[RMDB]
RNA sequence: GGGAACGACUCGAGUAGAGUCGAAAAUAACAUUCUCUAUUUCGACUAGCCAAAUUUUGAGAGGCCCGAACCCGCUGCAAUAUUGAGCGUAGGAUGGAUGGAUGACCCGGGUGGGCAGCGCGGAUAAUCAUGUUUAGCCUUUCGAGGCUAAACAUGAAAAAGAAACAACAACAACAAC
Reactivity to DMS in 0.01 (KOAc 150mM, MgCl2 10mM, bicine 150mM(pH8.5), 24C), signal-to-noise 1, nucleotides 027 to 126: u020a070a080c180a160u010u000c040u020c040u010a130u010u000u030c040g010a050c040u000a120g010c040c050a070a040a150u010u000u010u040g010a140g000a150g010g020c050c020c000g020a080a120c150c020c050g000c040u000g030c040a040a150u000a100u000u000g020a040g040c020g030u000a040g000g000a070u010g000g010a030u000g000g020a060u000g000a160c050c030c010g000g020g020u000g040g000g040c050a120g040c060g000c140g010g010a110u000a050a130

Source information: Conditions: 150 mM KOAc, 10 mM MgCl2 and 150 mM bicine (pH 8.5), 24 C. Structure probing data (DMS) for a 177-nucleotide construct. DMS adducts were read by reverse transcription with MarathonRT. Values cover nucleotides 27 to 126.